An RNA of 177 nucleotides, treated with DMS and read out base by base. Values cover nucleotides 27 to 126. The data come from the RNA Mapping Database (RMDB), library OK2TRN. The reactions ran in a buffer of 150 mM KOAc, 10 mM MgCl2 and 150 mM bicine (pH 8.5), at 24 C. For DMS the reverse transcriptase was MarathonRT.

RNA sequence: GGGAACGACUCGAGUAGAGUCGAAAAUGUCGUCCUGCGGUUUUCGUGUUCUUGGAUUCGAGUUCUCGCCUGUAUGCUAUUGGGUUUUCUGCGACCUGCGGAAACAGGCGGCACGUGGGGAGGUUUAUGGAGGGAUACUGUUCGCAGUAUCCCUCCAAAAAGAAACAACAACAACAAC
Reactivity to DMS in 0.01 (KOAc 150mM, MgCl2 10mM, bicine 150mM(pH8.5), 24C), signal-to-noise 1, nucleotides 027 to 126: u020g000u010c060g040u000c020c050u000g000c070g010g020u000u010u010u000c050g020u000g010u000u000c040u010u000g010g010a110u000u010c070g010a080g010u000u010c090u000c030g020c020c000u000g020u000a090u010g020c050u000a150u000u010g020g020g000u010u020u000u000c180u010g050c110g000a060c020c000u000g010c170g010g010a070a060a010c020a050g000g000c000g000g000c100a020c060g010u000g030g010g010g010a110g020g000u010u010u010a110